An RNA of 177 nucleotides, treated with DMS and 2A3 and read out base by base. The data come from the RNA Mapping Database (RMDB), library OK2TST. 2A3 adducts were read by reverse transcription with SuperScript II with manganese. The RNA was probed in 150 mM KOAc, 10 mM MgCl2 and 150 mM bicine (pH 8.5) at 24 C. For DMS, 1,825 sequencing reads were counted.
RNA sequence: GGGAACGACUCGAGUAGAGUCGAAAAGCCAUGCAAUUACUACAUGAAUAUUUUGAAGGAAAGUUUAUAAGCGCAUCUGAGGAAUUUAAAGCUGUUAAACAUUCUCUUAAGCGUAUUGGGGACGAAAGUAAUUAAUACGCUUCGGCGUAUUAAUUACAAAAGAAACAACAACAACAAC
Reactivity to DMS in 0.01 (KOAc 150mM, MgCl2 10mM, bicine 150mM(pH8.5), 24C), signal-to-noise 3, nucleotides 027 to 126: g020c060c010a050u020g000c050a090a100u000u030a110c080u000a070c040a030u010g020a080a070u000a050u000u000u010u020g000a090a090g010g000a040a040a090g000u000u000u000a050u000a180a040g030c030g010c130a010u000c060u010g010a070g010g000a050a150u010u010u000a040a100a170g020c080u000g000u000u000a040a020a040c070a090u000u000c000u000c030u000u000a070a090g020c060g010u000a060u010u010g020g000g010g020a110c120g000a070a060a110
Reactivity to 2A3 in 0.01 (KOAc 150mM, MgCl2 10mM, bicine 150mM(pH8.5), 24C), signal-to-noise 2, nucleotides 027 to 126: g030c010c010a020u070g040c000a040a210u130u030a090c000u030a060c020a120u060g030a090a030u100a060u140u070u120u130g030a070a000g000g050a050a020a060g000u080u150u000a070u080a090a060g000c030g000c030a020u020c020u030g080a100g060g150a100a080u040u110u050a230a180a040g000c070u000g040u100u000a030a040a000c020a090u060u000c070u060c000u070u040a050a000g000c010g000u010a040u080u140g010g000g000g010a010c010g080a060a020a000